[RMDB]
RNA sequence: GGGAACGACUCGAGUAGAGUCGAAAAGAUAUGGACCCAGUCACAAGCUAGGUGUAUAUUCGGAAACGAAUAGACACCUUGGACCUUGUGAGCUGGGUCCUAAGUCAAACGCUUUCUUCGGAAAGCGGGUACGUACAGCGUUCGCGCUGUACGUACCAAAAGAAACAACAACAACAAC
Reactivity to DMS in 0.01 (KOAc 150mM, MgCl2 10mM, bicine 150mM(pH8.5), 24C), signal-to-noise 2, nucleotides 027 to 126: g000a040u010a300u000g000g000a010c000c010c000a010g030u000c010a000c010a000a000g030c050u000a010g000g020u000g010u000a030u000a000u010u010c000g010g000a160a110a260c000g010a000a010u000a000g030a010c000a010c000c000u000u000g020g020a150c300c000u000u000g020u010g000a110g010c000u000g010g010g000u000c000c000u010a010a110g010u010c050a100a190a280c020g000c000u000u000u000c000u000u020c240g010g000a020a000a010g020c000g050
The record gives the reactivity of an RNA of 177 nucleotides to DMS. The DMS profile rests on 1,764 reads. The reactions ran in a buffer of 150 mM KOAc, 10 mM MgCl2 and 150 mM bicine (pH 8.5), at 24 C. DMS adducts were read by reverse transcription with MarathonRT. Values cover nucleotides 27 to 126. The data come from the RNA Mapping Database (RMDB), library TTRDES.